[RMDB]
The record gives the reactivity of an RNA of 207 nucleotides to DMS and 2A3.
The data come from the RNA Mapping Database (RMDB), library OK3TST.
The 2A3 profile rests on 530 reads.
The reactions ran in a buffer of 150 mM KOAc, 10 mM MgCl2 and 150 mM bicine (pH 8.5), at 24 C.

RNA sequence: GGGAACGACUCGAGUAGAGUCGAAAAACGGCUGCUUGGCUUAAGCCACUCAUCAGCGUUAUGCCAUAUUCACAGGCUUCUUUGGUCGGCUGGAUGUUAGACAAGAGUCUUGCCCCCCAGCGUUUUUCAAUGUCGUGGACCUCAAGCAAGCAAUCGAUGUUAAAAUUGACUUCGGUCAAUUUUAACAAAAAGAAACAACAACAACAAC
Reactivity to DMS in 0.01 (KOAc 150mM, MgCl2 10mM, bicine 150mM(pH8.5), 24C), signal-to-noise 1, nucleotides 027 to 156: a170c090g010g010c000u000g000c030u000u000g030g020c030u000u000a030a140g000c000c020a090c040u010c050a080u000c070a050g000c040g030u000u010a060u010g000c070c030a170u010a100u010u000c030a130c080a110g010g010c000u000u000c120u000u010u000g040g000u000c090g030g000c050u000g000g010a140u000g030u010u020a050g040a120c010a050a120g010a170g030u000c010u000u000g000c020c010c010c000c020c020a090g000c030g040u000u010u020u020u010c080a040a100u000g000u000c080g030u010g050g000a100c060c030u010c020a010a090g030c030a010a080g070c050a030a110u000c030g000a270
Reactivity to 2A3 in 0.01 (KOAc 150mM, MgCl2 10mM, bicine 150mM(pH8.5), 24C), signal-to-noise 2, nucleotides 027 to 156: a000c000g030g000c000u000g010c000u010u050g260g040c000u040u000a010a000g000c030c000a000c000u060c010a160u020c020a030g030c020g060u130u110a090u270g010c090c000a090u090a090u270u240c070a060c010a110g030g000c000u290u140c040u130u290u220g090g000u050c020g030g050c030u070g160g040a090u240g020u030u040a060g010a010c010a040a030g010a000g050u030c000u010u090g050c000c000c000c000c000c000a000g000c040g010u040u070u000u090u280c090a050a020u070g010u030c060g000u020g000g000a040c000c030u030c020a010a000g000c010a000a000g020c000a000a000u070c000g040a010